Annotation: This 177-nucleotide RNA was probed chemically with DMS and 2A3. The 2A3 profile rests on 6,711 reads. Source: RMDB library OK2TRN, as collected in RNAgym. The reactions ran in a buffer of 150 mM KOAc, 10 mM MgCl2 and 150 mM bicine (pH 8.5), at 24 C.
RNA sequence: GGGAACGACUCGAGUAGAGUCGAAAAGAUAACUACCGCUUGAUUGUAGAACUGCUUAGUGGUGUUCAGAAUGGGCUUUAAUUCAGAUGCCAGUAAGCAACCUUAUAGAGCCUGUCCUUUGGGAGGGUCUUCUCCUAUGAUUCGUCAUAGGAGAAGAAAAAGAAACAACAACAACAAC
Reactivity to DMS in 0.01 (KOAc 150mM, MgCl2 10mM, bicine 150mM(pH8.5), 24C), signal-to-noise 8, nucleotides 027 to 126: g010a130u010a090a140c030u000a070c030c070g020c190u010u000g010a120u010u010g010u000a020g000a120a120c140u000g000c010u000u000a010g020u000g000g020u000g010u000u010c060a100g010a020a010u000g000g020g010c290u010u010u010a060a040u000u000c010a150g020a030u000g010c010c010a010g000u000a010a020g000c010a030a100c060c030u000u010a080u010a130g000a120g010c010c030u000g000u000c010c010u000u000u010g010g010g010a300g000g000g010
Reactivity to 2A3 in 0.01 (KOAc 150mM, MgCl2 10mM, bicine 150mM(pH8.5), 24C), signal-to-noise 6, nucleotides 027 to 126: g020a030u110a080a070c010u020a030c020c030g070c100u100u140g070a280u130u130g030u040a030g010a140a060c070u020g020c000u050u000a060g090u100g020g000u030g060u070u050c050a030g020a020a020u050g030g080g110c060u210u230u220a090a010u010u030c010a020g000a020u010g010c010c010a110g080u010a000a000g000c000a010a070c010c000u070u080a130u050a150g090a010g060c000c000u190g120u110c010c000u050u110u180g080g010g000a020g000g000g000